[RMDB]
RNA sequence: GGGAACGACUCGAGUAGAGUCGAAAAGUGGCUGCUAUGCUAAAGUUGCAUGAGGUGGAGGCUCGAAGCAUGAAUCCAUCCGUCAGGAAACAAUUCACAGGCUUAUUAGCCCAGGGAGUGGCGGAGAGAUAAAUUACGGGUUCGCCCGUAAUUUAUCAAAAGAAACAACAACAACAAC
Reactivity to DMS in 0.01 (KOAc 150mM, MgCl2 10mM, bicine 150mM(pH8.5), 24C), signal-to-noise 6, nucleotides 027 to 126: g020u000g010g010c030u000g010c050u000a050u000g000c040u000a060a100a110g010u010u000g010c050a060u000g010a110g010g020u010g000g000a100g000g010c060u000c080g010a070a080g020c050a090u000g000a080a120u010c020c020a160u010c010c010g000u000c060a050g000g010a050a070a140c170a060a070u010u000c050a050c120a130g010g010c010u000u010a090u010u010a070g010c000c010c040a130g000g000g000a070g010u000g000g020c020g010g010a040g010a160
Reactivity to 2A3 in 0.01 (KOAc 150mM, MgCl2 10mM, bicine 150mM(pH8.5), 24C), signal-to-noise 4, nucleotides 027 to 126: g040u010g040g010c030u030g030c020u090a040u110g000c000u070a130a050a150g130u120u050g030c040a030u080g070a030g030g050u070g000g020a030g030g000c020u010c070g030a030a020g030c030a030u080g070a050a060u030c010c010a040u010c010c010g030u010c020a010g000g070a050a160a070c030a040a100u080u050c030a020c010a060g020g010c000u070u080a070u180u290a270g000c000c000c000a030g040g000g040a070g040u020g020g000c030g020g000a020g000a000
The record gives the reactivity of an RNA of 177 nucleotides to DMS and 2A3. 2A3 is a SHAPE reagent: it acylates the 2'-hydroxyl of flexible nucleotides of all four kinds. For 2A3, 4,764 sequencing reads were counted. For DMS the reverse transcriptase was MarathonRT. Values cover nucleotides 27 to 126. The reactions ran in a buffer of 150 mM KOAc, 10 mM MgCl2 and 150 mM bicine (pH 8.5), at 24 C.